[RMDB]
RNA sequence: GGGAACGACUCGAGUAGAGUCGAAAAUGGGGCUUGGUGCAAUACAAUGUGUCAGGAUGGGCCCAGUCUUAUGCCAGAAACAGAGAGGGCUAUGGGAAAGGAGCCCUGCAGCACGGCACCAGCUUGUCAGGUGCAGGAAAACAAGCGCGAAAGGCUGUGGUCAUAAUAUCUUCGGAUAUUAUGACCAAAAAGAAACAACAACAACAAC
Reactivity to 2A3 in 0.01 (KOAc 150mM, MgCl2 10mM, bicine 150mM(pH8.5), 24C), signal-to-noise 2, nucleotides 027 to 156: u080g010g000g010g000c020u070u040g000g000u000g000c000a020a030u090a150c020a060a170u140g030u010g100u070c070a070g140g060a060u100g000g050g010c000c000c000a000g040u020c000u060u060a030u070g030c020c000a020g170a090a120a030c060a000g100a060g030a140g110g080g010c070u100a080u070g040g000g000a000a010a040g010g010a040g010c020c000c000u030g000c030a020g020c010a000c050g020g010c030a000c040c000a000g020c050u120u110g040u070c020a020g070g020u010g020c030a010g000g030a000a020a010a020c050a000a010g000c030g000c020g030a000a000a000g030g030c030u050g070
Reactivity to DMS in 0.01 (KOAc 150mM, MgCl2 10mM, bicine 150mM(pH8.5), 24C), signal-to-noise 1, nucleotides 027 to 156: u000g010g030g040g000c020u010u000g020g000u010g060c000a080a180u000a100c160a120a210u010g030u010g010u000c030a170g040g020a150u000g000g000g140c020c040c010a080g000u000c030u010u000a070u010g000c040c000a300g010a150a060a100c030a130g000a100g020a250g000g010g020c050u000a040u000g050g030g000a090a050a170g050g000a080g000c060c050c000u000g060c040a060g000c020a070c010g040g010c040a020c060c010a150g000c000u000u020g000u020c010a070g030g030u000g030c010a110g000g010a020a030a070a090c030a020a080g030c050g050c040g040a040a060a070g030g000c010u000g020

This 207-nucleotide RNA was probed chemically with 2A3 and DMS. For 2A3 the reverse transcriptase was SuperScript II with manganese. The RNA was probed in 150 mM KOAc, 10 mM MgCl2 and 150 mM bicine (pH 8.5) at 24 C.